[RMDB]
RNA sequence: GGGAACGACUCGAGUAGAGUCGAAAAAUGUUCGCUUCGAUGCCGACGAGAACGUAUUCAAUCGCCAGCAGCUGAGGAGCUUCCGGUGAGCAACGCUCCUUUCGAUCACCGUCUGGUCAUCGAGCGCAUGUCCAUGAGUGUUCGCACUCAUGGACAUAAAAGAAACAACAACAACAAC
Reactivity to DMS in 0.01 (KOAc 150mM, MgCl2 10mM, bicine 150mM(pH8.5), 24C), signal-to-noise 3, nucleotides 027 to 126: a060u000g000u000u000c030g000c010u000u000c030g050a040u010g000c010c020g010a010c000g010a200g000a100a120c050g010u010a070u000u020c220a130a090u010c050g030c020c000a050g010c060a070g010c040u000g010a110g000g000a030g010c030u010u000c030c040g020g000u000g010a070g030c120a080a160c100g010c010u010c010c050u000u000u000c060g000a100u000c080a160c100c020g000u010c020u000g030g010u010c020a010u000c010g010a010g010c010g000c190
Reactivity to 2A3 in 0.01 (KOAc 150mM, MgCl2 10mM, bicine 150mM(pH8.5), 24C), signal-to-noise 2, nucleotides 027 to 126: a010u200g030u130u110c030g000c040u100u140c030g000a010u030g000c020c010g010a000c000g010a030g020a130a030c040g000u100a110u050u160c100a030a100u080c060g010c030c010a030g000c040a040g000c090u080g060a040g030g070a010g050c000u040u030c080c020g000g130u180g050a080g000c040a040a010c050g000c010u000c000c000u040u080u030c050g030a090u060c030a010c100c010g000u020c100u230g000g040u190c010a000u020c030g000a000g000c010g030c030
Record summary: Structure probing data (DMS and 2A3) for a 177-nucleotide construct. Conditions: 150 mM KOAc, 10 mM MgCl2 and 150 mM bicine (pH 8.5), 24 C. DMS adducts were read by reverse transcription with MarathonRT. For 2A3 the reverse transcriptase was SuperScript II with manganese. Values cover nucleotides 27 to 126.